Chemical mapping of a 177-nucleotide RNA with 2A3 and DMS. For 2A3, 2,904 sequencing reads were counted. DMS adducts were read by reverse transcription with MarathonRT. Values cover nucleotides 27 to 126. The data come from the RNA Mapping Database (RMDB), library OK2TRN. The RNA was probed in 150 mM KOAc, 10 mM MgCl2 and 150 mM bicine (pH 8.5) at 24 C. 2A3 adducts were read by reverse transcription with SuperScript II with manganese.
[RMDB]
RNA sequence: GGGAACGACUCGAGUAGAGUCGAAAAAGCUGCGCCAAAUCGGCGGAAAGGACCCCGCUAUCGGGAGCGGCUAGCAGCGAGGGUUGCCGCUCCAGCCGCGCUAUGAAGCAGCCAUAGCAGAUUUACAACCUACUAUCCAGUUCGCUGGAUAGUAGGUAAAAGAAACAACAACAACAAC
Reactivity to 2A3 in 0.01 (KOAc 150mM, MgCl2 10mM, bicine 150mM(pH8.5), 24C), signal-to-noise 2, nucleotides 027 to 126: a030g000c000u010g020c010g000c020c010a060a140a130u140c060g020g000c060g030g000a060a100a040g100g050a090c020c010c000c030g030c040u120a110u220c100g080g000g000a030g010c000g000g000c010u070a030g040c030a010g060c020g080a150g080g090g000u070u050g010c000c000g000c000u000c000c000a010g010c030c040g080c020g000c020u010a010u020g030a050a030g000c020a000g020c000c000a000u020a000g000c040a030g030a070u190u230u180a070c060a050
Reactivity to DMS in 0.01 (KOAc 150mM, MgCl2 10mM, bicine 150mM(pH8.5), 24C), signal-to-noise 4, nucleotides 027 to 126: a080g020c010u000g010c000g010c120c070a060a100a070u010c130g010g010c000g010g000a010a100a120g010g000a160c080c050c010c010g010c080u010a060u010c120g010g010g010a040g010c000g000g000c020u000a040g020c120a050g020c110g000a080g030g010g020u000u000g020c020c000g000c020u000c010c010a040g030c080c070g020c170g000c030u000a010u000g000a060a050g000c010a010g010c020c010a030u000a010g010c020a250g000a140u000u000u010a120c200a120